Chemical mapping of a 207-nucleotide RNA with DMS and 2A3. For 2A3, 1,789 sequencing reads were counted. For 2A3 the reverse transcriptase was SuperScript II with manganese. Conditions: 150 mM KOAc, 10 mM MgCl2 and 150 mM bicine (pH 8.5), 24 C.

RNA sequence: GGGAACGACUCGAGUAGAGUCGAAAAGCCAUGAGUCGCAACGCAAAUCCGCGGCAAGUGGAGUUAGCGAGAAGAGACUAGGCUUUGGUUUCUUCAAGUGAAGCGGUCACCAAUCAGGUGUGGUAGUAGGAGCCUGCAUGGUUCGCCAUGCAGGCAAGUCACUGUAUUUGUUCGCAAAUACAGUGACAAAAGAAACAACAACAACAAC
Reactivity to DMS in 0.01 (KOAc 150mM, MgCl2 10mM, bicine 150mM(pH8.5), 24C), signal-to-noise 2, nucleotides 027 to 156: g030c000c000a080u000g010a270g010u000c000g040c000a190a160c030g000c060a040a130a070u000c030c030g050c010g020g020c090a060a250g070u010g000g000a110g020u000u000a210g010c030g000a300g010a110a110g000a050g000a030c010u000a110g020g010c090u010u000u000g040g000u000u000u000c010u000u000c040a050a300g000u020g010a100a120g000c040g030g030u000c030a060c010c010a040a110u000c050a120g000g000u000g010u000g010g030u000a050g000u000a120g000g010a080g020c010c010u000g000c020a010u000g000g000u010u020c300g040c010c000a010u000g010c000a000g010g020c000a000a000
Reactivity to 2A3 in 0.01 (KOAc 150mM, MgCl2 10mM, bicine 150mM(pH8.5), 24C), signal-to-noise 2, nucleotides 027 to 156: g000c000c010a070u110g050a010g010u010c040g010c050a080a060c060g030c090a070a100a100u050c080c060g040c020g050g000c150a090a030g000u030g040g020a040g030u100u150a030g000c040g020a030g020a130a020g030a000g000a010c000u010a040g050g040c000u080u040u090g000g000u010u010u000c000u010u020c040a130a020g010u040g150a070a010g020c030g110g000u080c030a020c070c030a090a160u240c050a100g000g020u070g010u050g070g070u090a110g010u040a090g050g220a010g020c010c000u010g040c000a000u010g020g000u020u040c100g000c030c050a000u000g030c000a010g000g000c000a000a000